[RMDB]
RNA sequence: GGGAACGACUCGAGUAGAGUCGAAAAAAUUGAUGUCAAUAUUGUAGAAGAUUUGGGGAAAGAUGAGCCUGGGUUUACUCUACAGGCUAUGACACAACUUCCAGCCUGCACUGAUGAUGUGUGGGGUAUGUACACUAGCGUCACUAGUGAAGCAGCACAUCACCUAUAUCUUCGGAUAUAGGUGAUGAAAAGAAACAACAACAACAAC
Reactivity to 2A3 in 0.01 (KOAc 150mM, MgCl2 10mM, bicine 150mM(pH8.5), 24C), signal-to-noise 9, nucleotides 027 to 156: a000a010u140u110g050a140u060g040u020c030a060a050u050a040u160u070g030u040a030g010a120a010g020a060u040u050u070g010g010g000g030a080a110a080g090a110u150g060a030g060c010c010u000g000g020g000u030u080u070a120c080u050c010u060a070c010a000g010g000c030u060a070u050g010a000c000a000c000a060a060c020u020u010c010c020a050g050c020c030u040g010c030a010c030u100g050a170u070g000a050u070g130u000g000u020g010g020g010g000u050a100u080g040u020a010c010a000c010u000a010g020c020g230u090c050a020c090u000a000g010u010g020a040a030g070c080a010g050c090a010
Reactivity to DMS in 0.01 (KOAc 150mM, MgCl2 10mM, bicine 150mM(pH8.5), 24C), signal-to-noise 3, nucleotides 027 to 156: a040a040u000u010g010a120u000g020u010c030a080a100u010a070u000u000g030u000a040g000a120a060g020a100u010u000u000g020g010g010g010a100a100a130g010a160u010g010a100g000c010c020u010g010g000g020u000u000u000a070c180u030c020u000a030c080a020g020g000c080u010a020u000g010a070c050a050c030a040a080c040u000u000c040c020a120g000c040c010u010g040c030a020c030u000g000a160u000g000a120u010g000u010g020u010g030g080g040g010u000a010u010g020u000a120c040a040c010u000a060g020c050g010u010c130a120c010u000a030g000u000g010a060a090g040c010a090g020c070a190
An RNA of 207 nucleotides, treated with 2A3 and DMS and read out base by base. The data come from the RNA Mapping Database (RMDB), library OK3TST. Values cover nucleotides 27 to 156. Values are in units of 0.01, from 0 to 300, in steps of 10. The RNA was probed in 150 mM KOAc, 10 mM MgCl2 and 150 mM bicine (pH 8.5) at 24 C.